Chemical mapping of a 207-nucleotide RNA with 2A3. Source: RMDB library OK3TST, as collected in RNAgym.
[RMDB]
RNA sequence: GGGAACGACUCGAGUAGAGUCGAAAAGGUGCAGCAAGAUCAUUAUCAUCGACCUGAACGAGCAGCGUUUGGCGAUGGCCAAGACGUUGGGCGCGACCCACGCCAUCAACGGCCGGGACCCAGACGUCGUGGAGCAGAUCCAGGCCUUGACGGGCGGGAAUACUACCCGCUUCGGCGGGUAGUAUUCAAAAGAAACAACAACAACAAC
Reactivity to 2A3 in 0.01 (KOAc 150mM, MgCl2 10mM, bicine 150mM(pH8.5), 24C), signal-to-noise 2, nucleotides 027 to 156: g020g000u050g060c060a030g010c060a030a060g000a050u050c090a130u070u220a050u080c030a000u070c020g100a260c030c050u020g060a050a030c050g000a040g090c100a020g020c010g020u010u010u020g010g030c060g020a040u100g070g000c000c000a050a010g140a060c030g000u050u000g020g000g060c070g000c040g130a130c000c000c000a000c010g000c000c000a080u180c060a040a050c100g000g000c020c030g000g010g050a090c020c000c000a040g000a220c080g060u140c070g000u080g060g080a040g040c050a010g040a050u060c040c000a020g000g010c000c000u000u060g020a000c050g000g000g060c020g040g000